RNA sequence: GGGAACGACUCGAGUAGAGUCGAAAACCUAUCUCAACUCCAGGAUUGGACCAGUACUAGGCUCAUCAUAGUUAAGCCACAAUCCACGAUUCCUCAUCAGCUAUAAAAGCAAAACCUUCAUAUCUAUGUGUGAUGAAGGAUUCGUCCUUCAUCACACAAAAGAAACAACAACAACAAC
Reactivity to 2A3 in 0.01 (KOAc 150mM, MgCl2 10mM, bicine 150mM(pH8.5), 24C), signal-to-noise 4, nucleotides 027 to 126: c010c000u030a090u050c060u010c020a050a070c050u030c050c040a020g040g020a090u000u100g050g050a070c020c000a020g030u060a090c080u080a050g080g000c010u000c050a050u020c010a020u060a120g050u050u080a050a010g030c000c010a030c010a010a040u030c000c030a070c020g020a040u080u030c000c000u030c030a060u000c000a030g030c000u070a040u070a200a120a060a010g090c090a000a000a080a050c010c040u070u070c050a070u070a050u140c020u040a050u030